The record gives the reactivity of an RNA of 207 nucleotides to 2A3. The 2A3 profile rests on 808 reads. The reactions ran in a buffer of 150 mM KOAc, 10 mM MgCl2 and 150 mM bicine (pH 8.5), at 24 C. 2A3 is a SHAPE reagent: it acylates the 2'-hydroxyl of flexible nucleotides of all four kinds.
RNA sequence: GGGAACGACUCGAGUAGAGUCGAAAAAGUAUAUGUUUGCGCUUCUGGGGUGUGAGAAGUGUCUGAUGAGGCUGGGGAGAGUGUGGCGCAAGUACCCAGACCCUGUCCAUGCUCCGGGGAAGGGUGUGGAGCUGUGGGCCUGAGUGAGCCCCUCCUGCCUUCUAUCGAAGUUCGCUUCGAUAGAAGGAAAAGAAACAACAACAACAAC
Reactivity to 2A3 in 0.01 (KOAc 150mM, MgCl2 10mM, bicine 150mM(pH8.5), 24C), signal-to-noise 1, nucleotides 027 to 156: a000g140u090a110u030a020u210g050u030u080u050g040c020g010c020u020u010c010u090g020g000g000g020u030g020u050g040a090g050a070a020g040u040g040u100c050u040g060a080u060g020a000g050g010c040u040g020g000g000g000a030g010a020g010u070g010u060g090g000c080g020c060a000a050g070u070a060c020c000c000a000g000a030c000c010c000u000g120u010c030c010a050u080g020c010u030c100c040g000g030g000g070a040a080g030g040g000u030g050u030g000g000a030g050c100u060g080u100g110g010g000c030c000u020g000a060g040u060g030a010g020c000c000c000c000u010c000c000u000g010